[RMDB]
RNA sequence: GGGAACGACUCGAGUAGAGUCGAAAACCAUGGUUGUGUCUGCGGGUCAAGAGCAAACUAACUGUAAUACUAGUUCCUUAGCUUAUUACGAACCUGUGCAGGGUCGUAAAAUGCUGAUGGCUCUUCUAAGUAUAACAUGGUUCGCCAUGUUAUACUUAAAAGAAACAACAACAACAAC
Reactivity to 2A3 in 0.01 (KOAc 150mM, MgCl2 10mM, bicine 150mM(pH8.5), 24C), signal-to-noise 4, nucleotides 027 to 126: c000c000a020u060g080g000u040u050g030u020g010u080c010u020g020c060g060g010g020u090c040a050a040g030a010g070c010a060a020a020c010u030a040a030c010u060g070u210a070a070u050a210c090u050a040g030u080u080c010c000u020u020a000g000c010u050u070a040u050u000a100c010g020a090a120c020c000u050g040u110g140c160a070g000g000g000u010c010g010u000a000a000a000a020u070g000c000u000g030a070u090g050g020c020u010c000u030u020c010u000
Reactivity to DMS in 0.01 (KOAc 150mM, MgCl2 10mM, bicine 150mM(pH8.5), 24C), signal-to-noise 7, nucleotides 027 to 126: c010c020a140u010g010g020u000u000g020u010g010u000c020u000g000c070g010g000g010u010c100a090a070g010a120g000c020a060a060a080c050u010a050a060c050u000g010u000a070a090u010a090c130u000a080g010u010u010c040c010u000u010a010g010c000u000u000a260u000u000a010c000g010a030a050c000c000u000g010u020g010c220a100g010g010g010u000c000g000u000a000a010a050a070u000g000c000u010g000a050u010g010g010c190u000c010u000u000c040u000
Structure probing data (2A3 and DMS) for a 177-nucleotide construct. Source: RMDB library 15KREP, as collected in RNAgym. For 2A3 the reverse transcriptase was SuperScript II with manganese. In probing experiments dimethyl sulfate is read out at A N1 and C N3, which are open when not base-paired. For DMS, 9,664 sequencing reads were counted. Reactivities are rounded to 0.1 and cut off at 0 and 3.